Source information: Structure probing data (2A3 and DMS) for a 207-nucleotide construct. Source: RMDB library PDB130, as collected in RNAgym. The RNA was probed in 150 mM KOAc, 10 mM MgCl2 and 150 mM bicine (pH 8.5) at 24 C. The 2A3 profile rests on 3,542 reads.
RNA sequence: GGGAACGACUCGAGUAGAGUCGAAAAGCUAAUACCGAAUGAUAAAGUGUGGCGCAUGCCACGCUUUUGAAAGAUGGUUUCGGCUAUCGCUUACAGAUGGGCCCGCGGUGCAUUAGCUAGUUGGUAGGGUAAUGGCCUACCAAGGCAACGAUGCAUAGAAUUUUCUUAACUUCGGUUAAGAAAAUUCAAAAGAAACAACAACAACAAC
Reactivity to 2A3 in 0.01 (KOAc 150mM, MgCl2 10mM, bicine 150mM(pH8.5), 24C), signal-to-noise 4, nucleotides 027 to 156: g000c010u020a030a040u040a160c010c010g040a040a040u050g020a040u050a030a010a000g010u000g010u000g000g000c100g000c250a180u300g000c010c000a000c000g010c000u000u000u000u010g030a040a030a010g130a060u220g040g040u030u040u070c050g000g000c030u010a060u090c040g010c030u040u080a050c040a080g110a190u100g030g050g050c010c010c000g020c080g070g010u020g000c000a010u010u020a050g010c000u010a110g060u020u000g000g010u000a000g000g000g020u010a030a030u050g020g010c000c000u000a000c000c000a000a000g000g000c000a020a040c130g020a010u010g000c000a010u020a070
Reactivity to DMS in 0.01 (KOAc 150mM, MgCl2 10mM, bicine 150mM(pH8.5), 24C), signal-to-noise 2, nucleotides 027 to 156: g020c020u000a060a040u010a050c000c000g010a160a150u010g000a180u010a000a010a040g030u000g060u000g010g010c000g030c270a100u020g030c020c000a020c000g010c000u000u010u010u000g010a250a070a090g030a170u000g000g020u000u000u000c020g020g010c020u010a150u000c080g000c020u000u000a150c060a130g010a150u000g010g000g010c030c000c080g000c080g020g060u000g000c020a020u000u000a190g010c000u000a110g000u000u000g000g000u010a030g010g000g020u000a140a160u000g010g000c000c010u010a010c000c000a010a050g000g000c030a070a080c050g010a020u010g030c010a080u010a240